Source: RMDB library OK2TRN, as collected in RNAgym. This 177-nucleotide RNA was probed chemically with DMS.
RNA sequence: GGGAACGACUCGAGUAGAGUCGAAAACUAUGCCGGGCCCUCAAACCAUCUAGUGUUUGAUGACUUUGGACAGACGGUUGAGUAUAGGGGAUCCAAUGGUGAGAAGAGGAUUUUACAGCCGAAGUGGCGCUAGCCCGAAAUUCGUUUCGGGCUAGCGAAAAGAAACAACAACAACAAC
Reactivity to DMS in 0.01 (KOAc 150mM, MgCl2 10mM, bicine 150mM(pH8.5), 24C), signal-to-noise 1, nucleotides 027 to 126: c060u000a080u000g030c020c010g010g000g000c060c010c040u000c020a020a020a010c010c010a130u030c170u020a130g020u010g040u000u000u020g020a040u000g000a030c040u000u000u010g050g000a130c060a010g010a110c080g010g020u000u030g000a120g000u000a160u010a080g010g000g020g020a070u000c090c020a040a100u030g000g020u010g010a060g010a080a030g010a220g000g000a040u000u000u010u000a130c090a150g000c000c040g000a060a050g010u010g020g000

The RNA was probed in 150 mM KOAc, 10 mM MgCl2 and 150 mM bicine (pH 8.5) at 24 C.